[RMDB]
RNA sequence: GGGAACGACUCGAGUAGAGUCGAAAAGUGGUUCUAGGUUGUACACUGAUGUGAGUAUCUUUGACAACUUUAAUUUGUCCGCUGUGCUGCAACGAAAUGUUGGCACAGGGCGCACUGUUAUAGAAGAAACAAGGACGUAAUUCGUUACGUCCUUGUUAAAAGAAACAACAACAACAAC
Reactivity to DMS in 0.01 (KOAc 150mM, MgCl2 10mM, bicine 150mM(pH8.5), 24C), signal-to-noise 8, nucleotides 027 to 126: g010u000g000g010u010u000c100u000a060g010g010u000u000g010u000a130c030a020c040u000g010a040u000g010u010g010a210g020u010a030u000c000u000u000u000g010a060c030a020a030c010u000u010u010a040a100u000u010u000g010u000c080c010g010c020u000g000u000g010c010u010g010c020a020a050c080g020a110a110a110u010g010u000u010g020g000c000a010c010a010g010g000g000c190g020c080a030c070u000g010u000u010a110u000a090g000a090a110g000a120
Reactivity to 2A3 in 0.01 (KOAc 150mM, MgCl2 10mM, bicine 150mM(pH8.5), 24C), signal-to-noise 5, nucleotides 027 to 126: g030u040g040g060u060u080c060u080a050g030g020u030u030g020u040a120c010a010c020u030g010a020u020g130u060g110a110g070u190a010u020c000u000u040u030g000a010c010a010a020c000u040u090u060a070a110u080u090u140g060u060c010c020g100c160u020g000u000g000c020u090g050c020a030a020c020g150a230a180a180u240g000u030u080g000g000c010a000c000a000g000g010g000c030g000c010a030c040u040g050u150u080a160u060a100g140a160a010g040a040

Source information
This 177-nucleotide RNA was probed chemically with DMS and 2A3. For 2A3 the reverse transcriptase was SuperScript II with manganese. Conditions: 150 mM KOAc, 10 mM MgCl2 and 150 mM bicine (pH 8.5), 24 C.